About this RNA:
This 207-nucleotide RNA was probed chemically with 2A3. Reactivities are rounded to 0.1 and cut off at 0 and 3. 2A3 adducts were read by reverse transcription with SuperScript II with manganese. The reactions ran in a buffer of 150 mM KOAc, 10 mM MgCl2 and 150 mM bicine (pH 8.5), at 24 C. For 2A3, 525 sequencing reads were counted. Source: RMDB library M2RFPK, as collected in RNAgym.
RNA sequence: GGGAACGACUCGAGUAGAGUCGAAAAAUCACCGGUGGGGAACCCCAUACGGCAACGGCGUAGAAGUAAAUGCUAACCAAUCGGUGGUAUCUACGCGACGGAGCAUCCACGGAUAACUCUAACAAGGCUAAGCGUCUCGGUUUCGACCGAGACGCAAGUAAGCGUUAACGUUCGCGUUAACGCUUACAAAAGAAACAACAACAACAAC
Reactivity to 2A3 in 0.01 (KOAc 150mM, MgCl2 10mM, bicine 150mM(pH8.5), 24C), signal-to-noise 1, nucleotides 027 to 156: a050u090c020a010c010c020g000g030u050g000g000g000g150a170a170c090c010c030c010a000u130a090c000g030g000c030a010a040c010g040g000c000g020u000a000g010a100a020g040u090a090a100a000u010g000c050u110a020a160c070c000a090a230u230c120g070g000u010g000g000u010a060u000c010u000a000c030g000c010g000a030c030g090g000a000g010c000a010u030c040c010a020c070g010g000a020u080a150a100c010u000c010u110a010a210c100a080a090g050g010c090u120a210a060g060c000g000u000c000u000c030g000g110u000u100u080c170g060a020c000c000g000a000g000a000c000g000c000a000a000